RNA sequence: GGGAACGACUCGAGUAGAGUCGAAAACACUUUGAUUCCUGUGGCCUUCCAAUCGACAUUGGAUGUCCUGCAGGCCAUGCCAACCUCAGGCAUAAACAGGAAGUGCCAGUGGGGCACCCGCAGCUUACAGAGAGCAGACCUUCAAGAUGGCAGCCUACCACGGGUAAAUGUUCGCAUUUACCCGUGGAAAAGAAACAACAACAACAAC
Reactivity to 2A3 in 0.01 (KOAc 150mM, MgCl2 10mM, bicine 150mM(pH8.5), 24C), signal-to-noise 1, nucleotides 027 to 156: c080a010c070u140u200u120g120a150u080u050c000c010u010g020u060g010g000c020c020u000u020c000c030a030a090u060c140g160a140c080a150u060u150g070g000a040u060g040u110c000c000u030g000c010a000g010g000c000c000a070u060g000c000c000a040a070c010c050u120c190a040g000g010c010a030u100a040a210a040c040a040g040g000a040a020g020u010g020c020c000a020g020u060g000g050g000g000c050a070c010c040c020g020c010a020g010c010u040u040a070c060a020g100a000g020a010g000c060a060g020a070c040c090u060u020c060a040a000g010a050u040g010g000c010a000g000c000c010u000a050